[RMDB]
RNA sequence: GGGAACGACUCGAGUAGAGUCGAAAAUAACAGUGUCCAGGCGUGAAAACGUCUGUUAAUUAGCAAUGACUGUAUGCUAAUUGACUAUUGUGAAAACAAUAGGAUGCUGUUUAACAGUCAUUGAUACGAUCUUGAUGUAUUUCGAUAUGUCAAGAUCAAAAGAAACAACAACAACAAC
Reactivity to 2A3 in 0.01 (KOAc 150mM, MgCl2 10mM, bicine 150mM(pH8.5), 24C), signal-to-noise 9, nucleotides 027 to 126: u100a000a000c000a000g000u000g010u020c000c000a000g000g000c000g010u010g040a030a030a020a010c000g000u000c000u000g000u000u000a000a000u000u000a000g000c000a000a030u060g000a000c000u000g000u010a010u030g000c000u000a000a000u000u000g010a000c000u000a000u000u000g010u000g080a050a020a010a010c000a000a000u000a000g000g000a000u000g000c000u000g000u000u000u010a010a000c000a000g000u000c000a010u030u220g070a040u040a070c080
Reactivity to DMS in 0.01 (KOAc 150mM, MgCl2 10mM, bicine 150mM(pH8.5), 24C), signal-to-noise 9, nucleotides 027 to 126: u030a000a000c000a000g000u000g000u000c000c000a010g000g000c000g010u000g000a020a010a020a000c000g010u000c000u000g000u000u010a000a010u000u000a010g000c000a060a120u010g000a010c000u000g020u000a190u000g000c000u000a000a010u000u000g010a000c010u000a000u000u000g010u010g010a160a080a150a030c000a000a000u000a010g000g000a010u000g010c010u000g000u000u000u010a050a030c000a000g000u000c000a200u040u040g000a150u040a120c200